[RMDB]
RNA sequence: GGGAACGACUCGAGUAGAGUCGAAAAGGAACAUACAGACGGCCGCGAACCCGCGAGGGUAAGCUAAUCCGAAAAAGUGUUCCUUAGUUCGGAUUGCAGGCUGCAACUCGCCUGCAUGAAGCCGGAACAAACUAAUAAUGUUCGCAUUAUUAGUUUGAAAAGAAACAACAACAACAAC
Reactivity to DMS in 0.01 (KOAc 150mM, MgCl2 10mM, bicine 150mM(pH8.5), 24C), signal-to-noise 9, nucleotides 027 to 126: g000g010a020a010c010a010u010a090c190a160g010a300c010g000g020c300c210g000c000g000a230a070c000c000c000g010c300g000a170g000g000g010u000a010a300g000c010u000a100a080u010c000c000g000a030a050a120a110a170g010u000g000u000u000c000c000u000u000a070g010u020u010c010g000g010a120u010u000g000c000a010g010g010c000u010g020c180a120a110c210u020c160g000c000c000u000g000c000a000u010g000a210a120g000c020c010g010g000a080a160
Reactivity to 2A3 in 0.01 (KOAc 150mM, MgCl2 10mM, bicine 150mM(pH8.5), 24C), signal-to-noise 9, nucleotides 027 to 126: g000g000a010a000c000a000u130a050c030a040g230a060c020g000g010c030c020g010c010g020a080a110c010c000c000g020c040g030a110g000g000g010u020a010a000g000c010u030a050a050u030c000c010g100a080a040a010a020a020g020u010g000u010u010c000c000u000u020a050g020u030u050c010g000g010a030u010u030g000c000a000g010g000c010u070g060c100a070a080c050u050c140g000c000c000u000g000c000a000u010g000a000a010g040c010c010g020g010a030a020